[RMDB]
RNA sequence: GGGAACGACUCGAGUAGAGUCGAAAAAUUCGUUUUCUUGAGAGGUCAGCCUUGUUCACAUUCUGGAAAGAAUAUAAGUUGUAAGAGUCCAGUCAAACUUGCAAUUUCUUCAGAAGACAGAUUACAAUUAAAUUUUGCCUGCUUUAUAGAAUAGAGCCUUGAACAUACGUUUCGACGUAUGUUCAAGAAAAGAAACAACAACAACAAC
Reactivity to 2A3 in 0.01 (KOAc 150mM, MgCl2 10mM, bicine 150mM(pH8.5), 24C), signal-to-noise 2, nucleotides 027 to 156: a000u090u090c040g000u000u050u050u000c040u060u090g020a090g010a000g020g020u080c040a050g050c010c030u010u060g050u110u130c080a050c050a160u060u000c000u010g000g010a080a120a000g020a130a030u210a030u080a180a050g050u030u030g030u010a000a020g020a010g120u040c130c070a000g030u040c080a050a080a090c020u020u030g000c020a030a070u000u090u000c000u040u050c050a040g000a020a010g040a030c030a010g030a040u070u080a050c020a010a060u070u070a160a050a050u070u120u020u070g040c020c020u050g000c000u100u070u010a150u070a090g080a100a000u040a050g050a030g030c010
Reactivity to DMS in 0.01 (KOAc 150mM, MgCl2 10mM, bicine 150mM(pH8.5), 24C), signal-to-noise 1, nucleotides 027 to 156: a090u020u000c030g040u010u000u000u000c060u000u010g000a200g020a080g000g010u000c110a190g030c020c020u000u000g000u010u010c040a060c040a100u030u010c000u010g020g000a120a060a070g010a030a120u000a080u000a070a160g010u000u000g030u000a070a100g020a160g020u000c010c120a160g070u030c080a100a020a070c040u010u000g020c030a030a060u030u030u000c030u000u000c060a070g040a010a050g020a030c010a030g010a060u000u010a040c070a060a110u000u000a090a040a170u010u000u000u000g000c130c010u000g020c010u030u000u000a130u010a170g000a060a300u000a130g010a120g080c060

Overview: Conditions: 150 mM KOAc, 10 mM MgCl2 and 150 mM bicine (pH 8.5), 24 C. Chemical mapping of a 207-nucleotide RNA with 2A3 and DMS. Source: RMDB library OK3TST, as collected in RNAgym. For 2A3, 936 sequencing reads were counted. DMS (dimethyl sulfate) methylates the pairing face of unpaired adenines and cytosines.